[RMDB]
Structure probing data (DMS and 2A3) for a 177-nucleotide construct. For 2A3 the reverse transcriptase was SuperScript II with manganese. Source: RMDB library OK1LIB, as collected in RNAgym. For DMS the reverse transcriptase was MarathonRT. The reactions ran in a buffer of 150 mM KOAc, 10 mM MgCl2 and 150 mM bicine (pH 8.5), at 24 C.

RNA sequence: GGGAACGACUCGAGUAGAGUCGAAAAAUUUCACAUGGCCAAAAGUGCAAUGGGUUAUCACUAAUUCGCACGGCUCGAUGAUUAUUAUUAGUGAUGCAGGCAAGAAGUAUACUUCCGUUGAAAAACGCAUUACGGGCAUAUUCGUAUGCCCGUAAUGAAAAGAAACAACAACAACAAC
Reactivity to DMS in 0.01 (KOAc 150mM, MgCl2 10mM, bicine 150mM(pH8.5), 24C), signal-to-noise 4, nucleotides 027 to 126: a100u000u020u010c010a060c140a100u010g000g020c030c020a120a060a060a120g020u000g000c050a100a060u020g000g010g060u020u040a060u010c080a050c040u010a030a040u000u000c150g020c030a080c030g010g000c040u000c070g020a080u010g010a110u020u020a080u040u050a030u010u000a050g000u010g000a010u000g020c060a050g000g020c030a060a020g000a060a020g010u010a100u020a080c080u000u000c010c000g010u000u010g010a040a070a050a050a060c210g010
Reactivity to 2A3 in 0.01 (KOAc 150mM, MgCl2 10mM, bicine 150mM(pH8.5), 24C), signal-to-noise 4, nucleotides 027 to 126: a000u050u080u050c050a050c050a080u100g090g000c010c010a020a020a050a130g020u020g020c030a070a130u110g090g000g020u120u070a050u060c020a000c070u090a050a050u090u050c090g010c050a040c020g030g030c060u050c070g090a090u100g050a030u050u120a040u110u050a030u010u060a160g040u020g030a020u030g050c060a020g020g010c080a010a040g020a020a010g110u080a070u040a220c050u050u040c010c000g020u010u010g050a040a010a010a030a010c060g000